[RMDB]
RNA sequence: GGGAACGACUCGAGUAGAGUCGAAAAGCUGUGAAUAGGUAAGCCUAUAUCUGUUCGCACUACAGGCACUAUGUCGCAUCAUGGUCCCUGUUAACUCGAAGCUUGAUGCGACAAGUUUUGAGUGAUCUCAGACACUAUAGGCUUAGUUCUUGAGAGCCGCAGGCGCUAUGUUCGCAUAGCGCCUGCGAAAAGAAACAACAACAACAAC
Reactivity to 2A3 in 0.01 (KOAc 150mM, MgCl2 10mM, bicine 150mM(pH8.5), 24C), signal-to-noise 2, nucleotides 027 to 156: g050c100u010g040u010g070a080a060u060a050g070g000u020a020a000g000c000c000u010a010u000a030u030c020u010g030u030u020c040g000c010a000c020u120a060c010a050g050g020c060a000c060u130a080u230g010u050c060g000c110a080u020c000a000u050g080g000u160c030c020c020u110g090u100u120a160a100c080u020c030g040a010a000g030c010u000u010g010a010u030g080c010g060a030c030a000a000g000u010u010u020u030g030a010g010u020g070a090u050c040u000c060a020g010a050c030a030c110u060a030u000a020g000g000c000u020u010a020g020u150u080c050u060u240g030a130g020a080g080c030